The record gives the reactivity of an RNA of 177 nucleotides to DMS and 2A3. For 2A3, 2,682 sequencing reads were counted. It was measured as part of the RMDB library M2PK50.

[RMDB]
RNA sequence: GGGAACGACUCGAGUAGAGUCGAAAAUCUUAGGAGUUCGCUCCUAAGAAAAGGGCGAGGCCGUGCCACCUCUUCGGAGCAAUACUCGGCCAGUCACUCAGAAUGCGCUACCCUUCGGGGUAGCGAAUAUCCAAUCGAGAUUCGUCUCGAUUGGAUAAAAAGAAACAACAACAACAAC
Reactivity to DMS in 0.01 (KOAc 150mM, MgCl2 10mM, bicine 150mM(pH8.5), 24C), signal-to-noise 3, nucleotides 027 to 126: u000c000u000u000a010g010g000a020g020u010u010c280g010c000u000c000c000u000a000a010g000a010a050a090a090g000g000g030c010g000a100g010g020c000c030g000u000g000c070c080a270c300c010u000c020u000u020c160g020g010a020g010c030a060a110u000a060c040u000c010g000g000c010c010a150g010u000c020a090c040u000c070a150g010a080a110u030g000c010g020c000u000a000c000c000c000u010u010c160g030g000g000g020u010a000g000c000g010a010a040
Reactivity to 2A3 in 0.01 (KOAc 150mM, MgCl2 10mM, bicine 150mM(pH8.5), 24C), signal-to-noise 2, nucleotides 027 to 126: u000c010u010u000a010g000g010a000g010u040u110c150g150c060u000c000c000u000a000a000g000a000a030a000a010g020g000g020c030g050a210g010g020c010c020g030u030g070c070c030a250c130c020u050c000u070u060c200g150g000a020g000c020a010a010u030a130c030u000c000g000g000c000c010a000g010u010c010a040c050u050c020a040g120a140a090u170g040c000g000c000u000a000c000c010c000u010u050c190g040g000g000g000u000a000g000c000g000a000a000